[RMDB]
RNA sequence: GGGAACGACUCGAGUAGAGUCGAAAAGCGGCGCUCUCAAAGGUAUCAAAGGAAGUAUCAAAAGCAUCCGGUGAAUUCGUCACCUUUGGCGAUCGUCUUUUUGCUUCAUUGUCAGGAGCUAACGUCAGCGUUAAAUCGUUUAAUGAUUACCUGUCCACCUAAGCUGUGGGUUCGCCCACAGCUUAGGAAAAGAAACAACAACAACAAC
Reactivity to 2A3 in 0.01 (KOAc 150mM, MgCl2 10mM, bicine 150mM(pH8.5), 24C), signal-to-noise 1, nucleotides 027 to 156: g060c100g000g030c010g000c010u000c000u020c060a010a010a020g000g030u050a030u080c030a080a040a060g010g000a010a030g020u090a100u300c080a000a120a010a060g060c030a040u040c010c020g010g070u110g150a170a200u230u240c140g000u040c140a040c030c000u000u000u060g000g050c080g020a080u000c010g120u060c000u070u010u000u000u110g000c010u000u030c040a130u160u060g080u180c050a020g010g030a030g000c050u050a100a000c060g100u030c050a010g030c000g000u000u100a000a090a040u010c000g010u030u090u260a090a050u130g030a030u030u060a040c000c010u010g030u040c050c000a030